Structure probing data (2A3 and DMS) for a 177-nucleotide construct. The reactions ran in a buffer of 150 mM KOAc, 10 mM MgCl2 and 150 mM bicine (pH 8.5), at 24 C. As a SHAPE reagent, 2A3 marks flexible, mostly unpaired nucleotides at the ribose 2'-OH. It was measured as part of the RMDB library RFM100.
RNA sequence: GGGAACGACUCGAGUAGAGUCGAAAAAAUAAGCGAAUAAAGUAUCGUAUCAUUUAUGGCCACUAUUUAAACAAGUUACGGGCGCUCAUUUAUUCGCAAGUUUGAAUAUCUUGAGAAGUAAGUAGUAUCUGAUGAUCAGAUUCGUCUGAUCAUCAGAAAAAGAAACAACAACAACAAC
Reactivity to 2A3 in 0.01 (KOAc 150mM, MgCl2 10mM, bicine 150mM(pH8.5), 24C), signal-to-noise 2, nucleotides 027 to 126: a030a030u300a080a030g010c000g000a000a000u020a000a010a000g030u020a180u240c090g030u020a010u050c030a110u000u010u150a050u120g000g000c010c000a020c020u130a100u100u190u070a140a210a050c010a070a000g040u100u040a110c070g000g080g000c200g050c090u040c050a070u000u000u040a000u040u000c000g010c010a010a010g010u000u070u050g000a040a000u050a040u100c000u030u090g080a050g000a030a100g100u170a170a010g010u120a070g030u010a060
Reactivity to DMS in 0.01 (KOAc 150mM, MgCl2 10mM, bicine 150mM(pH8.5), 24C), signal-to-noise 2, nucleotides 027 to 126: a050a020u000a040a300g030c010g020a000a010u020a020a010a040g020u050a020u040c050g010u000a010u010c040a170u030u030u000a020u000g000g000c020c020a050c170u030a130u030u040u030a060a070a110c110a050a080g050u000u000a050c220g020g000g000c170g040c090u010c080a170u000u000u000a020u000u000c010g000c070a070a220g000u010u000u020g000a050a050u010a050u020c020u000u040g030a100g020a070a130g000u000a010a070g000u020a060g000u000a070